[RMDB]
Structure probing data (2A3 and DMS) for a 177-nucleotide construct. The RNA was probed in 150 mM KOAc, 10 mM MgCl2 and 150 mM bicine (pH 8.5) at 24 C. Source: RMDB library M2PK90, as collected in RNAgym. Values cover nucleotides 27 to 126. The 2A3 profile rests on 2,434 reads. The DMS profile rests on 1,182 reads.

RNA sequence: GGGAACGACUCGAGUAGAGUCGAAAAUAAAACAGUGCGUGGUAGCACUACCAUGACCAUGUUUCGGCACAUGGUCAGCCGAGUACAGCUUCGCCAGUACUCAGCGAACAACAACAACAACAAAAAAGUAGAAUUUUAAGUUCGCUUAAAAUUCUACAAAAGAAACAACAACAACAAC
Reactivity to 2A3 in 0.01 (KOAc 150mM, MgCl2 10mM, bicine 150mM(pH8.5), 24C), signal-to-noise 2, nucleotides 027 to 126: u130a000a070a000a010c070a000g030u020g000c020g020u100g140g160u260a030g010c020a030c010u010a020c020c030a130u100g000a000c000c000a010u010g060u020u140u210c140g130g020c080a030c000a010u000g000g000u020c000a010g000c020c020g000a010g010u000a000c010a010g000c140u110u120c120g050c070c010a000g010u020a010c020u000c010a020g010c020g040a020a020c010a030a000c010a000a000c000a010a020c000a000a000c020a050a110a030a020a000a060
Reactivity to DMS in 0.01 (KOAc 150mM, MgCl2 10mM, bicine 150mM(pH8.5), 24C), signal-to-noise 2, nucleotides 027 to 126: u000a070a070a130a080c110a010g000u000g000c010g010u000g040g010u000a170g020c020a020c000u010a060c140c090a200u000g010a000c000c000a010u000g000u010u010u010c190g020g000c140a100c010a000u000g000g010u010c020a030g020c020c030g020a010g000u000a000c010a110g000c120u000u000c110g000c070c020a110g020u000a000c000u000c000a000g000c000g010a110a080c050a000a020c020a030a020c040a020a060c020a060a000c040a020a040a100a040a080a090